Structure probing data (2A3 and DMS) for a 177-nucleotide construct. DMS adducts were read by reverse transcription with MarathonRT. In probing experiments dimethyl sulfate is read out at A N1 and C N3, which are open when not base-paired.
RNA sequence: GGGAACGACUCGAGUAGAGUCGAAAAAGCAGAAGAUUAUAUCUCAGUCGGAGUCUUGGAGCUAGGCAAAUAUCCGAGAAUAGCCUUUUUAAGAUUGGAUGUGGAUUUGCUGUUAAGAUAUAUUGUCCUCCACAGGAGAAUUCGUUCUCCUGUGGAGAAAAGAAACAACAACAACAAC
Reactivity to 2A3 in 0.01 (KOAc 150mM, MgCl2 10mM, bicine 150mM(pH8.5), 24C), signal-to-noise 4, nucleotides 027 to 126: a000g070c120a020g010a120a000g040a030u050u110a100u040a040u070c040u010c070a010g020u050c020g050g030a020g050u000c010u010u030g040g010a040g030c050u050a060g150g000c030a020a000a110u180a070u060c020c020g020a000g050a080a030u110a110g000c020c000u080u110u050u030u090a150a080g040a050u010u040g040g020a040u030g040u110g100g030a080u010u000u040g000c020u010g020u060u060a050a040g030a050u040a000u030a020u170u180g070u070c020
Reactivity to DMS in 0.01 (KOAc 150mM, MgCl2 10mM, bicine 150mM(pH8.5), 24C), signal-to-noise 3, nucleotides 027 to 126: a070g010c070a040g000a050a050g000a050u040u010a050u030a090u020c000u010c010a020g000u020c050g000g020a140g010u010c010u000u020g030g010a150g010c080u030a060g000g020c090a040a030a050u020a080u000c020c030g020a100g030a080a060u020a150g000c050c020u000u040u010u030u020a100a080g000a090u000u000g010g000a030u010g010u000g000g000a050u000u000u010g000c000u000g000u010u020a060a080g010a100u010a040u000a110u010u000g000u010c070